RNA sequence: GGGAACGACUCGAGUAGAGUCGAAAAGAUAUGGAAAGGUACGAUGAGGUUUAGUCGGAAACGACUGGGACCGAGUACCCUUCCUAAGUCAAACUCACCUCGCUGCCUUCGGGCAGCGAGGUGAGAAUCAAUAACCAACGUUCGCGUUGGUUAUUGAAAAAGAAACAACAACAACAAC
Reactivity to DMS in 0.01 (KOAc 150mM, MgCl2 10mM, bicine 150mM(pH8.5), 24C), signal-to-noise 3, nucleotides 027 to 126: g020a020u000a300u010g000g000a000a010a020g000g000u000a010c000g010a150u010g030a180g020g010u000u000u020a020g000u010c000g000g010a130a120a210c010g020a010c010u010g050g010g000a000c000c000g000a110g010u000a000c000c000c020u000u000c000c000u010a030a090g020u000c010a120a120a190c010u020c000a000c030c010u000c000g040c000u000g010c000c000u000u020c250g030g010g030c020a010g040c000g000a000g000g010u000g000a010g000a030a050
Reactivity to 2A3 in 0.01 (KOAc 150mM, MgCl2 10mM, bicine 150mM(pH8.5), 24C), signal-to-noise 2, nucleotides 027 to 126: g010a020u040a040u140g010g010a000a030a000g040g030u000a000c070g120a300u300g180a210g050g000u040u010u050a010g010u000c000g010g030a090a070a030c000g010a000c030u090g070g060g000a010c010c000g010a020g020u010a000c000c020c010u000u010c000c000u010a080a000g060u000c020a000a030a050c000u020c040a000c050c020u000c020g040c030u020g020c000c030u090u170c300g060g000g000c010a010g000c050g000a010g000g000u000g010a010g000a000a000